[RMDB]
Structure probing data (DMS and 2A3) for a 177-nucleotide construct.
RNA sequence: GGGAACGACUCGAGUAGAGUCGAAAAGAUAUGGAAGUACAUCGAUCUUGUACGUUGAUGACCUCGGAAACGAGCAAGACGACAAGGGAGUACUUCCUAAGUCAAAAGACCUGCUUCGGCAGGUCAACCUCAUGAUGCUGUUCGCAGCAUCAUGAGGAAAAGAAACAACAACAACAAC
Reactivity to DMS in 0.01 (KOAc 150mM, MgCl2 10mM, bicine 150mM(pH8.5), 24C), signal-to-noise 2, nucleotides 027 to 126: g000a030u000a300u010g020g000a000a000g010u000a010c000a170u000c210g000a080u040c010u000u000g010u000a070c040g010u000u010g000a100u000g000a070c300c000u000c000g010g000a070a050a210c000g000a000g000c030a070a110g000a020c000g010a030c020a000a020g040g020g010a110g030u000a000c000u000u000c000c000u000a040a030g000u000c020a020a050a060a170g000a010c000c000u000g000c000u000u020c190g000g000c000a010g010g000u000c000a020a010
Reactivity to 2A3 in 0.01 (KOAc 150mM, MgCl2 10mM, bicine 150mM(pH8.5), 24C), signal-to-noise 2, nucleotides 027 to 126: g030a030u080a060u190g000g010a020a000g020u020a000c050a300u170c210g170a120u000c030u000u010g010u050a300c010g020u010u010g070a250u100g060a060c000c010u000c000g010g040a110a070a070c020g020a000g050c030a070a110g010a000c000g010a000c000a000a020g000g040g000a060g010u020a010c000u010u000c000c000u010a060a030g030u010c030a070a110a160a000g010a000c020c010u010g000c000u070u080c240g100g000c000a000g000g000u000c010a000a000
For 2A3 the reverse transcriptase was SuperScript II with manganese.
The data come from the RNA Mapping Database (RMDB), library TTRDEL.